Structure probing data (DMS and 2A3) for a 177-nucleotide construct. For DMS, 9,478 sequencing reads were counted. The data come from the RNA Mapping Database (RMDB), library M2PK90. The reactions ran in a buffer of 150 mM KOAc, 10 mM MgCl2 and 150 mM bicine (pH 8.5), at 24 C. For 2A3 the reverse transcriptase was SuperScript II with manganese.
RNA sequence: GGGAACGACUCGAGUAGAGUCGAAAAUUAAACGCAACGACUCGAGUAGAGUCGAAAACAAAACGACUCGAGUAGAGUCGAAAACCCAACGACUCGAGUAGAGUCGAAGCGAAGGCAAGCGAAAAAACAAAUGUAACUUCUUCGGAAGUUACAUUUGAAAAGAAACAACAACAACAAC
Reactivity to DMS in 0.01 (KOAc 150mM, MgCl2 10mM, bicine 150mM(pH8.5), 24C), signal-to-noise 2, nucleotides 027 to 126: u000u010a150a080a180c090g010c030a060a170c000g010a000c000u000c000g020a080g000u000a100g000a020g000u000c000g000a010a030a050a050c000a000a000a050a020c010g000a010c000u000c000g000a090g010u000a040g000a000g000u010c000g000a000a010a070a030c000c000c000a090a190c010g010a000c000u000c000g010a110g010u000a050g000a030g010u000c000g000a030a130g010c040g010a130a070g010g010c130a080a100g030c070g000a010a050a060a060a050a050
Reactivity to 2A3 in 0.01 (KOAc 150mM, MgCl2 10mM, bicine 150mM(pH8.5), 24C), signal-to-noise 2, nucleotides 027 to 126: u030u000a100a010a070c300g000c300a010a010c020g000a000c000u000c000g020a010g040u060a020g020a000g010u000c000g000a000a000a000a010c060a060a070a000a000c000g000a000c000u000c000g010a010g040u060a010g020a000g000u000c000g000a000a000a000a000c000c000c000a010a010c000g000a000c000u000c000g030a030g100u140a020g060a000g000u000c000g000a020a010g000c020g030a070a010g040g000c040a030a040g040c030g110a120a010a000a000a010a010